Structure probing data (2A3 and DMS) for a 177-nucleotide construct. The reactions ran in a buffer of 150 mM KOAc, 10 mM MgCl2 and 150 mM bicine (pH 8.5), at 24 C. Reactivities are given for positions 27 through 126.
[RMDB]
RNA sequence: GGGAACGACUCGAGUAGAGUCGAAAAAUUCGCUGAGUACGCUGCUCUGACCUUCUUCCCAGUCUCGGUUCCUGUUCUGGGAGCUUGGGGCUGAGUAGCCACCAGCCCUGCUCUCUGCAGUGUUCUACGAAGUGCAACUCUUCGGAGUUGCACUUCGAAAAGAAACAACAACAACAAC
Reactivity to 2A3 in 0.01 (KOAc 150mM, MgCl2 10mM, bicine 150mM(pH8.5), 24C), signal-to-noise 1, nucleotides 027 to 126: a000u160u090c020g000c000u000g000a040g080u070a040c070g030c070u070g030c000u100c050u090g120a130c000c010u110u170c010u030u020c000c000c040a040g050u010c000u000c040g060g000u030u000c000c000u020g050u120u080c000u080g000g020g000a000g010c020u120u170g010g000g000g000c000u010g000a000g000u000a040g020c040c020a000c000c000a000g000c000c000c000u030g000c000u000c010u000c000u040g050c030a080g000u010g090u160u010c000u010a010
Reactivity to DMS in 0.01 (KOAc 150mM, MgCl2 10mM, bicine 150mM(pH8.5), 24C), signal-to-noise 1, nucleotides 027 to 126: a130u000u030c090g010c050u060g010a050g020u000a120c150g040c000u000g000c020u000c000u020g020a100c050c010u000u000c170u020u000c000c000c000a160g000u000c050u000c070g000g000u000u010c010c000u000g000u010u020c100u000g020g010g000a010g000c150u030u020g030g000g000g010c000u000g000a080g010u000a260g000c110c100a040c090c000a010g050c010c000c010u010g030c010u000c050u020c080u000g000c040a050g010u000g000u000u000c010u000a120